[RMDB]
RNA sequence: GGGAACGACUCGAGUAGAGUCGAAAACACAAGGUAACCAAGCACAGCAGAACGAACAAAUGCAAGAAGCAAGUAGAAGUGAACAUAAUGGUUUAUCUAAUGCUGAAUAUGCAGACAAGUAUAAUCAAUAUAGGGAAGCUCAACGAGCACAAGCAGACCAUUUAAGCCCAUUCGUGGGCUUAAAUGGAAAAGAAACAACAACAACAAC
Reactivity to DMS in 0.01 (KOAc 150mM, MgCl2 10mM, bicine 150mM(pH8.5), 24C), signal-to-noise 1, nucleotides 027 to 156: c000a070c120a100a030g010g040u040a070a040c150c030a070a180g030c020a070c030a060g070c010a070g000a020a070c060g010a070a190c110a080a130a240u030g030c070a030a120g040a150a080g020c020a030a070g000u030a030g020a070a040g020u000g010a030a030c060a070u000a070a020u010g000g010u000u010u000a030u020c010u000a050a110u000g020c000u000g000a080a090u000a080u000g030c050a010g050a100c060a070a150g040u000a020u000a010a030u020c030a060a030u000a150u020a040g020g000g070a130a100g000c110u000c040a040a080c020g030a070g040c020a040c060a020a020g000c110a120g000a160
Reactivity to 2A3 in 0.01 (KOAc 150mM, MgCl2 10mM, bicine 150mM(pH8.5), 24C), signal-to-noise 3, nucleotides 027 to 156: c120a000c000a010a000g030g010u020a060a030c070c020a040a020g020c020a010c030a050g000c000a000g000a080a020c050g010a060a020c090a070a170a000u100g020c030a020a020g020a040a000g050c010a010a010g030u000a010g010a040a000g020u040g010a020a010c040a020u210a150a060u100g020g050u020u030u050a040u010c020u070a100a070u020g010c000u020g050a080a060u140a060u270g050c000a000g010a070c050a110a000g070u030a040u070a080a030u050c060a050a050u000a040u110a080g060g010g000a040a000g030c040u010c050a000a140c130g010a010g000c010a020c020a120a030g080c030a010g090a060